[RMDB]
RNA sequence: GGGAACGACUCGAGUAGAGUCGAAAAGCGCCAGAAGGCGGGGGCGUGGGUUUCCAGCGUUUCACCGUCCACCGGCGGGGUGAAAUCCACAUCGCACAGGGUGCGCAUCCAGUGUGACGGACUGUGCGGAUCUCUAUGAGUUCGCUCAUAGAGAUCCAAAAGAAACAACAACAACAAC
Reactivity to 2A3 in 0.01 (KOAc 150mM, MgCl2 10mM, bicine 150mM(pH8.5), 24C), signal-to-noise 1, nucleotides 027 to 126: g020c020g030c010c010a060g060a190a080g140g020c050g020g000g020g010g000c020g000u090g020g010g040u020u110u020c010c000a030g010c030g010u000u090u160c120a130c020c000g040u000c000c040a060c040c000g030g000c010g060g000g050g000u130g060a030a050a000u020c000c000a030c000a090u140c070g010c000a020c010a020g080g050g110u240g020c030g000c010a030u090c060c030a120g110u040g010u050g100a040c000g020g090a080c030u000g020u020g000c010
Reactivity to DMS in 0.01 (KOAc 150mM, MgCl2 10mM, bicine 150mM(pH8.5), 24C), signal-to-noise 2, nucleotides 027 to 126: g010c030g030c010c010a060g000a130a130g010g010c020g040g000g010g020g010c130g020u010g000g010g010u000u000u000c030c060a220g010c110g000u000u000u000c020a090c040c030g000u020c010c120a170c250c140g020g000c030g000g000g000g010u000g010a030a080a060u000c040c010a090c170a090u000c060g000c020a010c030a050g000g000g000u010g010c040g000c030a060u010c110c070a130g000u000g010u010g000a120c050g010g010a170c040u000g020u000g000c080

Source: RMDB library OK2TRN, as collected in RNAgym. The record gives the reactivity of an RNA of 177 nucleotides to 2A3 and DMS. For DMS the reverse transcriptase was MarathonRT. The RNA was probed in 150 mM KOAc, 10 mM MgCl2 and 150 mM bicine (pH 8.5) at 24 C.